[RMDB]
Description: This 177-nucleotide RNA was probed chemically with 2A3 and DMS. Conditions: 150 mM KOAc, 10 mM MgCl2 and 150 mM bicine (pH 8.5), 24 C. In probing experiments dimethyl sulfate is read out at A N1 and C N3, which are open when not base-paired. 2A3 adducts were read by reverse transcription with SuperScript II with manganese.
RNA sequence: GGGAACGACUCGAGUAGAGUCGAAAAACGCCCUAAACGAUGUAUGCUAGUUGUUGGGGUGCUAGUCAUCUCAGUAAUGCAGCUAACGCAUUAAGCAUACCGCCUGGGGAGUACGGUCGCAAGAUUAAUAGUGUAAACAGUUCGCUGUUUACACUAUAAAAGAAACAACAACAACAAC
Reactivity to 2A3 in 0.01 (KOAc 150mM, MgCl2 10mM, bicine 150mM(pH8.5), 24C), signal-to-noise 9, nucleotides 027 to 126: a000c060g050c000c000c000u050a070a080a020c050g030a040u170g010u020a010u030g010c020u020a040g070u080u070g030u040u030g020g000g000g020u000g000c010u050a050g060u220c000a010u010c010u000c010a030g030u080a030a030u070g020c030a050g070c140u120a060a030c100g000c010a010u030u070a040a000g000c000a010u010a040c010c010g020c010c030u070g000g000g010g000a020g040u050a050c070g020g030u040c030g010c090a050a020g010a070u040u070a060
Reactivity to DMS in 0.01 (KOAc 150mM, MgCl2 10mM, bicine 150mM(pH8.5), 24C), signal-to-noise 9, nucleotides 027 to 126: a080c130g000c010c000c000u000a040a070a090c070g000a110u020g010u000a010u000g010c010u000a120g010u000u010g010u010u000g010g000g010g020u000g010c010u040a070g010u040c010a010u000c010u000c020a050g010u010a030a010u000g010c060a130g010c160u030a090a120c200g010c010a040u010u000a060a080g000c010a020u000a010c010c050g000c070c050u010g000g000g000g000a080g020u010a070c110g000g000u000c030g000c120a090a090g000a070u010u010a100